This 177-nucleotide RNA was probed chemically with DMS. The data come from the RNA Mapping Database (RMDB), library TTRINS. Reactivities are given for positions 27 through 126. In probing experiments dimethyl sulfate is read out at A N1 and C N3, which are open when not base-paired. The RNA was probed in 150 mM KOAc, 10 mM MgCl2 and 150 mM bicine (pH 8.5) at 24 C. DMS adducts were read by reverse transcription with MarathonRT. Values are in units of 0.01, from 0 to 300, in steps of 10.

RNA sequence: GGGAACGACUCGAGUAGAGUCGAAAAGAUAUGGACGUUCCAGGACAUACAACAGCGGAUUAGUAAGGGAGAUCGGAAACGAUCUCCCUUACUAAUCCGACAUGUAUCGCUGGAGACGUCCUAAGUCCUUUAAGGCAAUGUUCGCAUUGCCUUAAAGAAAAGAAACAACAACAACAAC
Reactivity to DMS in 0.01 (KOAc 150mM, MgCl2 10mM, bicine 150mM(pH8.5), 24C), signal-to-noise 3, nucleotides 027 to 126: g010a090u010a300u000g020g010a010c000g020u000u000c000c010a010g000g010a300c160a020u010a010c000a050a120c300a200g000c000g000g000a010u010u000a000g010u000a020a000g000g010g010a020g000a010u000c020g030g000a070a100a200c010g000a020u000c000u000c000c000c000u000u000a010c000u000a000a000u000c000c000g000a000c100a070u000g010u000a000u000c260g000c000u000g000g000a070g010a010c010g020u000c000c010u000a000a080g000u000c060